Structure probing data (DMS) for a 177-nucleotide construct.
Reactivities are given for positions 27 through 126.
Reactivities are rounded to 0.1 and cut off at 0 and 3.
RNA sequence: GGGAACGACUCGAGUAGAGUCGAAAACAUUGCGCAGGUCAGCUUGCCCAGGUCCCCCAAUGAGCAACGGUUACAGCUGGCCCGACGGUUGACCGGUAACGACCGCACCCUGGACGUCAUGGCGCUGAAGUAACCACACUUUCGAGUGUGGUUACUUAAAAGAAACAACAACAACAAC
Reactivity to DMS in 0.01 (KOAc 150mM, MgCl2 10mM, bicine 150mM(pH8.5), 24C), signal-to-noise 1, nucleotides 027 to 126: c100a080u010u000g030c020g040c130a170g010g000u000c010a000g010c070u010u000g020c050c010c060a070g000g020u000c040c010c000c000c080a100a110u000g000a040g000c070a100a100c180g010g000u000u010a090c110a030g030c000u000g000g040c010c000c040g030a040c060g010g000u000u010g020a070c070c010g010g010u010a050a120c100g000a080c030c010g000c110a140c030c030c050u010g010g020a140c060g000u000c020a040u000g010g030c000g040c060u000g010